[RMDB]
Structure probing data (DMS and 2A3) for a 177-nucleotide construct. Source: RMDB library TTRDEL, as collected in RNAgym. For DMS the reverse transcriptase was MarathonRT. Conditions: 150 mM KOAc, 10 mM MgCl2 and 150 mM bicine (pH 8.5), 24 C. For 2A3, 2,055 sequencing reads were counted.
RNA sequence: GGGAACGACUCGAGUAGAGUCGAAAAGAUAUGGAGCACGGUAAUACUAGGUACCUCGAUGAGUCGGAAACGACGAGAGGACCUAGUGCCAGUGCUCCUAAGUCAAAGCCAGCCUUCGGGCUGGCAACUACGACAAGGUGUUCGCACCUUGUCGUAGAAAAGAAACAACAACAACAAC
Reactivity to DMS in 0.01 (KOAc 150mM, MgCl2 10mM, bicine 150mM(pH8.5), 24C), signal-to-noise 1, nucleotides 027 to 126: g010a040u010a300u010g000g000a020g010c010a020c020g040g010u000a100a070u020a300c000u000a010g010g010u000a090c030c000u000c000g000a110u030g010a180g000u000c000g000g000a040a060a140c010g030a000c000g000a160g020a010g010g020a040c000c000u010a010g010u000g020c000c000a070g000u000g010c000u110c000c000u010a000a080g000u000c040a100a110a120g020c000c000a000g000c000c000u000u010c250g010g010g000c000u000g010g000c000a010a020
Reactivity to 2A3 in 0.01 (KOAc 150mM, MgCl2 10mM, bicine 150mM(pH8.5), 24C), signal-to-noise 2, nucleotides 027 to 126: g050a020u100a060u160g010g000a000g050c000a000c030g050g010u060a180a150u110a300c030u010a010g130g030u300a300c000c000u030c020g190a300u250g100a100g020u010c000g000g000a050a070a060c020g000a000c020g040a050g000a000g010g000a020c000c000u000a000g000u010g000c000c010a000g000u000g010c010u000c000c000u010a020a010g000u010c000a090a000a000g000c000c000a010g020c050c000u080u110c300g080g000g000c010u000g010g000c000a000a000